[RMDB]
RNA sequence: GGGAACGACUCGAGUAGAGUCGAAAAGAUAUGGACGAGUCUUGAACUACGUCGAUUCGUUCGGAAACGAACGGGACGCAAGACGAUGAGUCCUAAGUCAAAAGUAGUACACUUCGGUGUACUACAACACGAACUAGCAGUUCGCUGCUAGUUCGUGAAAAGAAACAACAACAACAAC
Reactivity to DMS in 0.01 (KOAc 150mM, MgCl2 10mM, bicine 150mM(pH8.5), 24C), signal-to-noise 2, nucleotides 027 to 126: g020a010u000a300u000g000g000a030c000g010a300g000u010c010u000u000g000a140a100c110u010a280c020g020u010c000g010a090u000u000c000g020u020u000c000g020g000a060a100a100c000g020a000a010c010g000g000g000a010c030g010c010a040a020g000a100c040g000a050u010g010a300g010u000c000c000u000a030a110g000u000c080a080a030a100a080g000u010a030g040u000a020c000a010c000u000u020c140g050g000u000g000u000a000c000u000a000c000a110a200
Reactivity to 2A3 in 0.01 (KOAc 150mM, MgCl2 10mM, bicine 150mM(pH8.5), 24C), signal-to-noise 2, nucleotides 027 to 126: g040a020u040a040u100g000g030a010c050g040a000g030u020c010u020u060g070a220a110c180u290a040c300g090u080c060g070a130u060u140c000g000u000u010c000g000g030a060a000a040c000g000a000a000c000g000g090g030a000c020g030c110a060a000g040a000c060g040a080u170g030a030g010u000c020c020u000a070a000g040u010c070a000a030a060a150g020u000a000g010u000a000c010a020c020u080u170c300g060g000u000g000u010a000c000u000a000c020a000a000